RNA sequence: GGGAACGACUCGAGUAGAGUCGAAAAGGAGUUGAGACUGGUGUGUGUUUAGUGGAUUAUCUGAUCAGCACAUGUGUGACAGUGUUGAUCACAAGUCAUUGCCAGCUCUGUUCAUUUUCUUCCCUGGCGAUUGAUCUUAGUUCGCUAAGAUCAAUCGAAAAGAAACAACAACAACAAC
Reactivity to DMS in 0.01 (KOAc 150mM, MgCl2 10mM, bicine 150mM(pH8.5), 24C), signal-to-noise 3, nucleotides 027 to 126: g000g000a040g010u000u010g010a030g010a140c010u000g010g020u000g030u010g030u010g000u000u000u010a110g020u010g000g000a100u000u000a090u000c170u010g000a020u000c010a020g010c010a010c000a080u000g020u010g020u010g000a080c050a050g010u000g010u000u000g010a020u000c000a010c090a050a080g010u000c020a050u000u010g000c000c010a010g010c020u000c010u000g000u000u000c020a080u000u000u000u000c140u010u000c000c000c000u010g010g000
Reactivity to 2A3 in 0.01 (KOAc 150mM, MgCl2 10mM, bicine 150mM(pH8.5), 24C), signal-to-noise 4, nucleotides 027 to 126: g040g000a020g000u030u020g040a040g030a240c000u020g030g030u040g020u020g020u030g070u090u160u190a170g050u090g150g050a100u070u060a080u180c040u040g000a010u000c000a010g030c010a030c100a180u050g070u030g070u130g150a060c020a040g010u000g000u000u010g010a000u010c000a010c010a000a010g020u000c010a030u010u180g000c010c000a010g000c000u000c010u020g010u030u000c010a040u030u050u030u000c000u000u040c010c000c020u020g130g070
Annotation:
The record gives the reactivity of an RNA of 177 nucleotides to DMS and 2A3. High 2A3 reactivity points to a flexible backbone, as in loops and unpaired stretches. DMS adducts were read by reverse transcription with MarathonRT. The reactions ran in a buffer of 150 mM KOAc, 10 mM MgCl2 and 150 mM bicine (pH 8.5), at 24 C.